[RMDB]
RNA sequence: GGGAACGACUCGAGUAGAGUCGAAAAAUGUAUCUGAACUGUCUUUUAAUAUUGUUUUAGUUGUGGAUCGGUGGAAUGCUUGGUUUUGCUGUUAAAGAAAGGAGCAAAUCCUAACUAUCAAGAUAUUUCAGGCUGUACACCCCUUCAUUUGGCAGCAGGAUGCUAAUUUUUUCGAAAAUUAGCAUCCAAAAGAAACAACAACAACAAC
Reactivity to 2A3 in 0.01 (KOAc 150mM, MgCl2 10mM, bicine 150mM(pH8.5), 24C), signal-to-noise 3, nucleotides 027 to 156: a000u060g020u030a080u060c020u050g010a040a050c000u020g060u050c020u000u280u120u160a170a090u140a150u130u100g080u040u120u010u050a030g000u040u040g030u030g070g000a030u040c070g010g010u030g030g090a160a010u050g020c040u070u000g020g050u060u030u070u060g000c000u030g020u120u030a010a080a010g070a020a060a020g090g000a020g000c040a020a080a090u000c010c000u020a040a050c010u020a050u080c040a070a000g040a120u010a030u050u120u050c000a010g040g000c040u040g010u030a030c010a040c010c030c000c010u020u110c080a120u070u070u040g040g030c020a020g150c010a040
Reactivity to DMS in 0.01 (KOAc 150mM, MgCl2 10mM, bicine 150mM(pH8.5), 24C), signal-to-noise 2, nucleotides 027 to 156: a070u000g010u000a040u010c030u010g050a080a070c060u000g010u000c020u000u000u000u000a050a120u000a070u010u010g000u000u000u000u000a130g020u000u000g040u000g020g000a060u000c040g040g030u010g010g030a140a120u000g000c040u010u030g020g010u000u010u000u000g040c010u000g010u010u000a050a070a120g020a110a090a050g020g040a030g010c040a080a100a130u000c020c010u000a030a140c070u010a110u000c080a050a080g010a070u000a060u000u010u000c040a030g010g040c060u010g030u010a090c080a050c020c000c000c020u000u000c020a150u010u000u010g030g020c000a040g020c000a200